Background
This 177-nucleotide RNA was probed chemically with 2A3 and DMS. It was measured as part of the RMDB library TTRDEL. Reactivities are given for positions 27 through 126. For DMS the reverse transcriptase was MarathonRT. The RNA was probed in 150 mM KOAc, 10 mM MgCl2 and 150 mM bicine (pH 8.5) at 24 C.
[RMDB]
RNA sequence: GGGAACGACUCGAGUAGAGUCGAAAAGAUAUGGAGCUGCCGAUAAGGUCCCAUCGGAAACGAUGGAAGACCUUUUGACGGCACCUCCUAAGUCAAACGAUCUUUAAUGUUCGCAUUAAAGAUCGAAGCAUACGUUGAACUUCGGUUCAACGUAUGCAAAAGAAACAACAACAACAAC
Reactivity to 2A3 in 0.01 (KOAc 150mM, MgCl2 10mM, bicine 150mM(pH8.5), 24C), signal-to-noise 1, nucleotides 027 to 126: g000a000u000a010u080g000g000a010g030c010u010g000c010c000g040a060u050a300a030g010g010u010c000c010c010a000u000c000g000g010a030a030a010c010g010a000u010g000g070a080a180g010a040c000c000u000u030u060u020g010a000c000g000g010c000a000c000c000u000c000c010u010a000a000g010u000c050a130a050a070c030g010a000u000c000u000u000u020a000a000u020g090u080u090c300g000c170a020u000u000a000a010a000g000a020u000c010g000a000a000
Reactivity to DMS in 0.01 (KOAc 150mM, MgCl2 10mM, bicine 150mM(pH8.5), 24C), signal-to-noise 2, nucleotides 027 to 126: g010a010u010a040u010g000g010a010g010c300u000g010c000c000g020a010u000a000a010g040g010u000c010c000c010a000u000c000g020g000a020a010a030c000g030a010u030g000g000a020a120g020a010c000c000u000u000u000u000g020a280c040g000g010c000a010c090c000u010c000c000u010a020a060g000u010c010a110a070a270c030g010a010u000c010u000u000u020a000a000u010g010u000u010c210g030c000a010u000u000a000a010a010g000a000u000c000g010a010a060